[RMDB]
This 177-nucleotide RNA was probed chemically with DMS. The RNA was probed in 150 mM KOAc, 10 mM MgCl2 and 150 mM bicine (pH 8.5) at 24 C. Values cover nucleotides 27 to 126.
RNA sequence: GGGAACGACUCGAGUAGAGUCGAAAAACCCGGGGGACCGGUGGAGCCAUGGGAUGCUCCUCCCGAUGUCCGUCCAACCCCCUCCCCCCGAGUGUCGCCCAGGAAUGGCGGGACCCCACUCAACUGGCAAACAUUGUAGGUUCGCCUACAAUGUUUGAAAAGAAACAACAACAACAAC
Reactivity to DMS in 0.01 (KOAc 150mM, MgCl2 10mM, bicine 150mM(pH8.5), 24C), signal-to-noise 2, nucleotides 027 to 126: a040c010c010c000g030g000g020g020g010a070c040c060g010g020u000g000g000a030g010c020c090a140u020g000g000g000a300u000g010c060u000c000c010u010c220c020c020g010a110u000g000u000c010c020g020u000c000c030a140a180c030c000c000c010c020u000c000c000c000c040c010c070g010a050g010u000g020u000c010g000c030c000c030a130g010g020a110a090u010g010g000c090g010g000g000a050c020c010c010c020a080c100u000c090a110a110c130u000g010g000